[RMDB]
RNA sequence: GGGAACGACUCGAGUAGAGUCGAAAAACAGAUGCCUCCUCAUAUAAAUUGCUGACUUCUGGAUAUAUUCUGGUUCGGGAAUGGGUAGAUUUCUGAUGUGGUUUAGUAGGUAUAUAAAUCCCGUGAGCUUCUUGCAUCUAAUUUCUCUGAUCCUGCACAGCUAAUUACCAUUCGUGGUAAUUAGCUGAAAAGAAACAACAACAACAAC
Reactivity to DMS in 0.01 (KOAc 150mM, MgCl2 10mM, bicine 150mM(pH8.5), 24C), signal-to-noise 1, nucleotides 027 to 156: a110c060a060g000a060u000g000c040c050u000c040c010u020c050a100u000a150u000a080a140a160u000u020g010c060u030g010a090c030u000u000c010u010g020g010a160u010a150u010a100u000u000c020u030g000g000u010u000c020g010g060g010a070a050u010g020g030g000u010a040g010a170u000u000u000c040u020g020a120u030g020u000g000g010u000u000u000a060g030u000a060g030g000u010a080u010a080u000a060a080a150u000c020c000c030g000u020g030a080g020c030u000u000c040u000u000g020c000a090u000c020u000a050a060u000u000u000c030u000c010u000g000a160u000c020c020u000g000c120a240
Reactivity to 2A3 in 0.01 (KOAc 150mM, MgCl2 10mM, bicine 150mM(pH8.5), 24C), signal-to-noise 2, nucleotides 027 to 156: a000c040a000g050a070u060g010c010c010u000c020c010u050c070a050u120a020u080a130a160a150u120u140g050c030u020g020a090c000u020u030c030u090g010g050a020u050a010u020a070u200u050c010u050g080g000u040u040c040g040g020g040a040a070u050g020g000g030u030a020g020a080u030u120u030c020u050g080a110u070g030u020g030g060u020u030u000a020g010u030a020g080g030u010a060u000a010u010a080a100a030u040c000c000c020g020u030g040a010g030c000u050u010c010u030u120g010c020a020u000c000u040a110a100u020u100u000c010u000c000u040g040a080u050c010c020u050g000c130a030

The record gives the reactivity of an RNA of 207 nucleotides to DMS and 2A3. For 2A3, 980 sequencing reads were counted. It was measured as part of the RMDB library OK3TST. Reactivities are given for positions 27 through 156. For DMS the reverse transcriptase was MarathonRT. The reactions ran in a buffer of 150 mM KOAc, 10 mM MgCl2 and 150 mM bicine (pH 8.5), at 24 C.